The record gives the reactivity of an RNA of 170 nucleotides to 2A3 and DMS.
For 2A3, 110,809 sequencing reads were counted.
It was measured as part of the RMDB library 15KLIB.
The DMS profile rests on 96,591 reads.
For 2A3 the reverse transcriptase was SuperScript II with manganese.
The reactions ran in a buffer of 150 mM KOAc, 10 mM MgCl2 and 150 mM bicine (pH 8.5), at 24 C.

[RMDB]
RNA sequence: GGGAACGACUCGAGUAGAGUCGAAAAUGCCUACGCAUUUUUAAUGGCCAAGGAUGGAAUAACCAAACUGGCUGAUGUUGAAGCGGACGUCGCAGCACGUGCUGAUGACGAAGGCUUCAUCACAUUAUAGCAUAGUUCUUCGGAACUAUGAAAAGAAACAACAACAACAAC
Reactivity to 2A3 in 0.01 (KOAc 150mM, MgCl2 10mM, bicine 150mM(pH8.5), 24C), signal-to-noise 9, nucleotides 027 to 129: u040g020c010c050u080a070c120g010c020a020u000u020u010u020u160a180a120u210g020g000c010c020a080a060g030g010a020u020g010g040a140a150u120a220a090c000c000a010a000a020c010u010g020g000c030u060g080a100u110g010u010u010g000a010a000g000c010g020g090a010c010g000u000c010g000c000a000g000c010a040c260g180u300g020c000u010g010a300u090g000a010c000g010a150a050g030g000c000u000u000c000a000u010c000a000c000a020u090u210a160u170a100g050
Reactivity to DMS in 0.01 (KOAc 150mM, MgCl2 10mM, bicine 150mM(pH8.5), 24C), signal-to-noise 9, nucleotides 027 to 129: u030g000c010c100u040a110c240g020c040a020u010u010u020u010u020a050a100u010g020g020c000c000a040a050g030g010a270u030g010g040a220a140u050a130a130c000c000a020a060a210c000u010g020g010c000u010g030a050u020g010u010u000g010a000a000g000c000g000g030a300c000g000u010c010g010c010a000g030c020a190c300g030u050g010c000u010g000a060u000g000a030c020g040a010a260g020g000c060u020u000c000a020u030c030a030c080a050u030u040a050u040a090g020